[RMDB]
RNA sequence: GGGAACGACUCGAGUAGAGUCGAAAACGUGAUACGACUCACGCGAUGAGGCUAUAUAGGCUGACCCAAUGAUCGGUAUCACCCAGGCAGAAGCCGUGCUGACCAUUGAGCUGCAACGCCCGGAGCGGCAGUUCAGGACAUUCGUGUCCUGAACUGCAAAAGAAACAACAACAACAAC
Reactivity to 2A3 in 0.01 (KOAc 150mM, MgCl2 10mM, bicine 150mM(pH8.5), 24C), signal-to-noise 1, nucleotides 027 to 126: c040g060u060g010a010u040a110c090g040a030c050u020c020a000c040g020c000g040a080u090g070a040g010g000c020u010a030u040a020u110a300g110g000c000u020g060a170c000c000c000a000a010u080g000a020u010c010g050g000u020a050u100c000a070c050c030c010a040g010g000c050a040g060a260a040g030c020c000g010u020g020c030u030g020a050c000c000a010u010u060g040a010g010c020u030g000c070a040a110c060g020c000c010c060g060g020a080g050c050g050
Reactivity to DMS in 0.01 (KOAc 150mM, MgCl2 10mM, bicine 150mM(pH8.5), 24C), signal-to-noise 2, nucleotides 027 to 126: c110g010u000g000a050u000a030c090g000a060c120u010c010a030c020g010c120g010a160u000g000a250g010g020c030u000a160u010a190u000a090g000g000c010u000g000a100c060c010c000a060a040u010g020a020u000c030g000g020u000a040u000c100a040c070c050c110a080g030g000c020a080g010a140a110g020c020c030g000u000g000c060u000g000a100c080c050a150u000u010g010a090g020c010u000g030c060a070a060c220g010c030c000c010g010g000a150g020c020g010

Chemical mapping of a 177-nucleotide RNA with 2A3 and DMS.
The RNA was probed in 150 mM KOAc, 10 mM MgCl2 and 150 mM bicine (pH 8.5) at 24 C.
For 2A3, 2,005 sequencing reads were counted.
It was measured as part of the RMDB library OK2TST.